[RMDB]
RNA sequence: GGGAACGACUCGAGUAGAGUCGAAAAGAGUCUGUGUGUCAGUCUGAGUCUCACAGUGUCUCACAGAGACUCUCUGACAGUGAGAGACACUCACUCAGAGUCAGAGACAGAGUCAGAGAGACUGACAGUUGUACAAGAGUUUCGACUCUUGUACAACAAAAGAAACAACAACAACAAC
Reactivity to DMS in 0.01 (KOAc 150mM, MgCl2 10mM, bicine 150mM(pH8.5), 24C), signal-to-noise 8, nucleotides 027 to 126: g010a120g010u000c020u000g020u010g020u010g010u000c000a030g010u000c020u010g000a250g020u000c010u000c080a110c130a100g020u010g010u000c030u000c010a140c160a130g010a080g010a030c030u000c010u000c030u010g000a040c170a040g000u010g000a030g000a270g010a150c280a090c020u000c030a040c000u000c090a090g000a130g010u000c010a070g000a050g000a050c080a090g000a120g010u000c040a040g000a150g000a060g010a040c010u000g000a010c020a080
Reactivity to 2A3 in 0.01 (KOAc 150mM, MgCl2 10mM, bicine 150mM(pH8.5), 24C), signal-to-noise 7, nucleotides 027 to 126: g070a020g090u060c050u080g120u030g030u020g010u090c000a010g010u000c030u070g100a040g080u010c000u020c020a060c030a080g150u050g010u040c010u010c030a130c040a020g160a030g000a060c000u010c000u000c050u030g020a030c030a010g000u010g000a020g010a010g030a030c020a030c160u010c010a010c000u030c030a040g020a010g100u020c030a020g010a000g000a030c020a040g090a010g060u010c050a010g040a010g000a000g000a130c000u000g000a010c020a030